[RMDB]
RNA sequence: GGGAACGACUCGAGUAGAGUCGAAAAGGAGACGCUGCGGGUACUGCGCGUGCACAAGGAGUCGCUGCUGACCAUCGUGGAGGUCUUCAUCCACGACCCCCUCUACCGCUGGGCCCUCACCCCAGCCAUGGUACUGGAUUUUCGAAUCCAGUACCAUAAAAGAAACAACAACAACAAC
Reactivity to 2A3 in 0.01 (KOAc 150mM, MgCl2 10mM, bicine 150mM(pH8.5), 24C), signal-to-noise 2, nucleotides 027 to 126: g090g010a050g020a010c040g000c100u080g020c040g030g040g050u110a060c040u080g030c040g000c020g060u040g010c040a020c040a060a060g090g010a020g030u020c000g030c090u110g010c040u050g010a000c010c000a020u010c010g010u000g000g020a010g000g010u040c050u120u110c110a090u020c000c000a000c000g010a010c000c010c000c070c000u030c010u030a100c030c030g000c000u000g000g020g000c080c030c030u070c030a060c030c000c000c000a000g000c000c000
Reactivity to DMS in 0.01 (KOAc 150mM, MgCl2 10mM, bicine 150mM(pH8.5), 24C), signal-to-noise 4, nucleotides 027 to 126: g000g000a090g030a090c060g010c040u000g010c160g000g020g030u000a060c090u000g020c080g020c090g010u000g010c050a070c080a070a140g000g000a040g020u000c020g010c030u000g010c050u000g010a070c030c010a210u000c010g010u010g010g010a020g000g000u000c030u000u010c150a220u000c010c000a020c010g000a060c000c000c000c010c030u010c090u000a070c130c090g000c010u010g000g000g000c050c050c080u010c120a090c300c000c000c010a020g000c050c220